[RMDB]
Chemical mapping of a 207-nucleotide RNA with 2A3 and DMS.
The DMS profile rests on 8,298 reads.
It was measured as part of the RMDB library OK3TST.

RNA sequence: GGGAACGACUCGAGUAGAGUCGAAAACAGGUGACUUUUGUGCUGAGGUGCGUCAUGCUAUUGCUAGCGGUGUUUUCAGCGUUGGUAAUUUCAUUUGUGACGUUACUGACGAUGUGCUUGGAAAACCAUGGUUCUUGAAGAAACUUGGUGUUCUAGCCAUUCCUCGACUAUUCGUAGUCGAGGAAUGAAAAGAAACAACAACAACAAC
Reactivity to 2A3 in 0.01 (KOAc 150mM, MgCl2 10mM, bicine 150mM(pH8.5), 24C), signal-to-noise 8, nucleotides 027 to 156: c040a020g080g030u040g070a080c040u070u070u110u090g050u070g060c010u050g020a020g030g000u020g010c010g030u040c030a030u080g020c020u050a030u050u080g010c010u020a010g020c020g120g040u040g030u050u080u080u210c050a050g050c020g010u000u000g010g010u010a010a010u020u050u050c090a110u060u180u300g170u080g010a010c020g020u040u140a020c010u010g030a020c020g030a040u070g030u040g050c020u090u120g020g010a030a080a030a010c010c010a040u030g040g020u040u020c060u120u270g140a270a170g010a040a060a030c000u010u020g010g000u030g030u030u010c010u000a020g000c000
Reactivity to DMS in 0.01 (KOAc 150mM, MgCl2 10mM, bicine 150mM(pH8.5), 24C), signal-to-noise 2, nucleotides 027 to 156: c050a100g030g020u000g000a080c000u000u010u000u020g020u000g030c010u010g010a220g020g000u010g020c030g030u000c040a080u020g020c060u010a060u000u010g000c020u010a080g050c020g000g010u000g030u000u000u000u000c020a020g010c000g030u000u000g020g020u000a020a000u000u000u010c030a200u000u010u010g020u000g010a020c050g030u010u010a040c010u000g000a120c050g010a030u000g040u000g010c040u010u000g050g000a030a040a040a030c000c000a010u000g020g010u000u000c020u010u000g010a170a280g030a040a020a020c020u000u000g020g000u000g010u010u010c010u000a050g030c060